This 177-nucleotide RNA was probed chemically with DMS and 2A3. As a SHAPE reagent, 2A3 marks flexible, mostly unpaired nucleotides at the ribose 2'-OH. The 2A3 profile rests on 822 reads. In probing experiments dimethyl sulfate is read out at A N1 and C N3, which are open when not base-paired. For 2A3 the reverse transcriptase was SuperScript II with manganese. The RNA was probed in 150 mM KOAc, 10 mM MgCl2 and 150 mM bicine (pH 8.5) at 24 C.

RNA sequence: GGGAACGACUCGAGUAGAGUCGAAAAAGGAGGACUAAUAGGGCAACAGUUUGGGCACCUAAUGCUACUUAGCUAAGCUAUCUUACCACGGGCUGUUAGUAAAUUUCUACUGGGGAAAGUCAACAUCGUAUGCAACUUUGUUCGCAAAGUUGCAUACAAAAGAAACAACAACAACAAC
Reactivity to DMS in 0.01 (KOAc 150mM, MgCl2 10mM, bicine 150mM(pH8.5), 24C), signal-to-noise 2, nucleotides 027 to 126: a110g000g020a070g010g000a070c030u010a070a120u000a100g040g020g010c040a040a060c090a060g000u000u000u010g030g010g020c060a050c120c040u030a070a100u000g010c040u000a100c150u000u000a040g020c040u000a090a090g010c050u000a060u020c040u000u010a070c050c060a060c130g000g000g020c050u010g000u000u010a040g000u000a030a060a090u000u010u000c050u000a080c050u000g010g030g020g000a020a100a120g020u000c070a040a080c110a080u000c130
Reactivity to 2A3 in 0.01 (KOAc 150mM, MgCl2 10mM, bicine 150mM(pH8.5), 24C), signal-to-noise 1, nucleotides 027 to 126: a020g090g010a050g000g000a030c020u030a010a100u040a140g000g000g020c030a050a000c060a160g000u020u090u140g020g030g000c080a000c020c050u110a050a030u110g010c040u080a150c040u120u030a010g020c030u050a020a150g000c010u030a040u250c010u060u060a000c030c090a030c010g000g040g000c010u030g000u040u030a020g000u020a070a020a300u060u170u050c040u060a010c030u050g040g000g000g000a020a040a020g060u020c010a000a020c010a080u080c020